RNA sequence: GGGAACGACUCGAGUAGAGUCGAAAACUCUGGGUGGGGAAAGAUCUGAAGGACUAAUUCUCUGUUACUGGAGAGGGACCCUGAGAAGCUGAGCCAAGAUCAAAUGCCAUAGGAAUGUAAAGUGGCAUAUAGAUGAUGAUUUCGAUCAUCAUCUAUAAAAAGAAACAACAACAACAAC
Reactivity to DMS in 0.01 (KOAc 150mM, MgCl2 10mM, bicine 150mM(pH8.5), 24C), signal-to-noise 9, nucleotides 027 to 126: c070u000c040u010g000g010g020u010g010g000g000g000a090a070a080g000a060u000c040u010g010a120a110g010g000a090c070u010a080a100u010u000c020u000c010u010g000u000u010a110c180u010g000g010a110g010a110g000g000g010a140c070c070c040u000g000a080g010a060a080g010c080u010g010a090g010c030c040a060a060g000a050u010c060a050a100a090u000g000c010c010a020u000a080g010g010a110a080u000g010u000a050a080a150g020u000g000g010c020a050
Reactivity to 2A3 in 0.01 (KOAc 150mM, MgCl2 10mM, bicine 150mM(pH8.5), 24C), signal-to-noise 4, nucleotides 027 to 126: c050u030c020u030g090g000g020u130g020g040g000g030a040a070a040g020a040u030c030u090g060a110a040g040g010a020c020u090a060a090u080u030c020u010c010u030g100u170u130a110c070u100g010g010a020g040a070g060g000g020a010c020c000c030u030g020a040g000a050a020g040c070u040g010a000g020c000c020a040a010g020a040u050c020a000a110a070u060g000c000c000a020u070a030g080g130a230a060u130g020u230a040a090a040g020u000g010g000c020a000